[RMDB]
RNA sequence: GGGAACGACUCGAGUAGAGUCGAAAACGACCGCUGUUAAUACCGCAGUUUCUGAGGAUGUUGGCGUCGACUUUUCACUGACAGAUCGUCCCACUCCAUUCCUAGAGGCAUUUGCAACCAACCCAGAUCAUAAACUCGUCACGACGCUCAUCGAUGCCGGAUCACUAAUCUUCGGAUUAGUGAUCCGAAAAGAAACAACAACAACAAC
Reactivity to 2A3 in 0.01 (KOAc 150mM, MgCl2 10mM, bicine 150mM(pH8.5), 24C), signal-to-noise 2, nucleotides 027 to 156: c100g070a080c010c040g030c050u030g060u100u120a110a060u070a180c040c050g000c030a050g000u030u010u030c040u030g070a100g180g010a050u080g030u210u160g060g000c020g010u010c010g010a060c010u120u080u080u120c090a080c060u030g070a020c030a050g040a110u020c030g030u010c000c000c000a030c030u020c010c010a050u110u000c010c040u070a050g010a070g110g000c010a060u040u080u180g000c010a090a020c030c000a030a030c000c040c020a030g000a010u050c030a080u130a090a050a120c060u040c060g060u080c080a030c130g090a020c020g010c040u060c060a040u070c030g050a030u070g030c100

Chemical mapping of a 207-nucleotide RNA with 2A3. For 2A3, 1,145 sequencing reads were counted. Values cover nucleotides 27 to 156.